An RNA of 207 nucleotides, treated with DMS and 2A3 and read out base by base. The RNA was probed in 150 mM KOAc, 10 mM MgCl2 and 150 mM bicine (pH 8.5) at 24 C. For DMS, 1,884 sequencing reads were counted. Reactivities are rounded to 0.1 and cut off at 0 and 3. It was measured as part of the RMDB library OK3TST. DMS adducts were read by reverse transcription with MarathonRT. For 2A3 the reverse transcriptase was SuperScript II with manganese.

RNA sequence: GGGAACGACUCGAGUAGAGUCGAAAACUCUCAAAGUGCUGGGAUGACAGGAGUGAACCACCGCGCCUAGCCAACAUCCUUUCCUUCCUUUGUCCCAACAUUGAUCUUACUCAGAUGUUUACAUCUCUCUCCCCAAUUGCACUAGGGACAGGAAGGGCGAGAUGAAAACAUUCGUGUUUUCAUCUCGAAAAGAAACAACAACAACAAC
Reactivity to DMS in 0.01 (KOAc 150mM, MgCl2 10mM, bicine 150mM(pH8.5), 24C), signal-to-noise 1, nucleotides 027 to 156: c130u010c000u020c010a060a140a080g060u000g030c030u010g050g010g070a070u000g000a120c000a050g010g020a120g020u010g030a100a210c150c110a130c110c060g000c080g030c000c010u010a130g040c000c050a090a080c080a070u020c020c010u000u000u000c040c000u000u010c000c010u000u030u010g020u010c030c030c000a110a100c040a090u000u010g020a160u000c050u010u010a060c050u020c000a070g000a110u000g010u000u010u010a170c020a050u010c010u000c000u000c040u000c000c000c000c000a100a120u010u000g080c040a080c090u000a180g000g080g010a050c020a070g020g000a020a050g000g010g050
Reactivity to 2A3 in 0.01 (KOAc 150mM, MgCl2 10mM, bicine 150mM(pH8.5), 24C), signal-to-noise 4, nucleotides 027 to 156: c040u040c010u000c020a080a080a010g140u170g050c020u050g000g000g090a220u100g030a110c100a120g020g020a050g080u150g090a120a100c030c040a070c040c020g040c010g000c000c000u020a020g000c030c010a030a020c030a070u160c010c000u050u100u090c000c000u020u000c020c000u130u140u230g000u000c010c000c000a010a060c030a090u030u140g030a080u080c060u110u130a080c080u120c150a050g000a140u030g060u090u170u110a130c100a090u020c040u000c000u030c010u070c060c010c010c020a010a010u080u080g000c020a000c050u060a070g000g000g000a020c000a000g000g000a000a000g000g000g030